[RMDB]
RNA sequence: GGGAACGACUCGAGUAGAGUCGAAAAGUGGGUCCUCUUUUGUCGCUUAUAAGAACACUCUUAUUGGAUUUAGGGCCCACCCUAAUCUAAUAUGAUCUUAUCUUCAUCCUUAACUAAUGAUAUCUGCAAAGACCCCAUUUCCAAAUUAGGUCGCAUACAUUAGCUCCCCUUUCGAGGGGAGCUAAUGAAAAGAAACAACAACAACAAC
Reactivity to 2A3 in 0.01 (KOAc 150mM, MgCl2 10mM, bicine 150mM(pH8.5), 24C), signal-to-noise 2, nucleotides 027 to 156: g040u040g000g010g010u000c040c030u040c090u030u090u120u170g210u120c070g040c170u090u090a010u030a060a020g000a020a060c060a050c180u080c010u000u030a040u000u030g030g010a060u050u090u180a020g000g010g010c010c000c010a180c010c000c000u000a040a010u000c010u020a020a070u070a070u180g040a050u040c060u040u080a040u060c040u110u040c040a090u040c000c030u100u110a070a200c050u020a100a000u060g080a040u300a070u300c070u090g060c030a070a000a210g030a060c020c000c000c100a040u030u020u000c040c020a070a030a100u070u060a030g040g000u050c030g010c070a090u060a140
An RNA of 207 nucleotides, treated with 2A3 and read out base by base. Source: RMDB library OK3TST, as collected in RNAgym. Conditions: 150 mM KOAc, 10 mM MgCl2 and 150 mM bicine (pH 8.5), 24 C.